[RMDB]
RNA sequence: GGGAACGACUCGAGUAGAGUCGAAAACUUCUAUUCACUGUGCCAUCUUACAUCCGUAGGUGAUCAGAGGGGAAAAGAAGAGCUAGAGCAACUCCCACACUCAUGAGCGUCCUCAUACUGUUCUGGGGGACCCUAUGGAAUUCGUUCCAUAGGGUCCAAAAGAAACAACAACAACAAC
Reactivity to DMS in 0.01 (KOAc 150mM, MgCl2 10mM, bicine 150mM(pH8.5), 24C), signal-to-noise 2, nucleotides 027 to 126: c000u030u010c000u000a060u000u000c050a080c050u010g000u000g030c250c020a060u030c050u090u000a050c030a060u040c210c210g020u030a010g000g000u000g020a160u040c010a040g000a020g030g000g010g000a020a010a200a070g000a070a040g020a130g010c080u000a030g000a090g000c090a040a020c120u000c000c010c050a080c080a060c030u020c040a040u040g000a020g000c000g000u000c010c030u010c030a060u050a050c110u010g000u000u000c050u000g000g040g040
Reactivity to 2A3 in 0.01 (KOAc 150mM, MgCl2 10mM, bicine 150mM(pH8.5), 24C), signal-to-noise 6, nucleotides 027 to 126: c020u040u000c010u020a070u020u020c020a000c040u080g020u050g170c040c000a030u020c030u100u070a050c020a100u080c040c080g040u050a020g000g050u030g030a080u070c030a000g030a060g080g040g020g030a010a020a010a030g030a010a010g020a030g060c050u090a030g020a010g080c060a040a040c010u030c000c010c010a030c000a010c010u080c030a110u180g050a010g020c020g030u020c010c000u020c020a050u100a160c080u050g030u070u030c000u020g030g020g040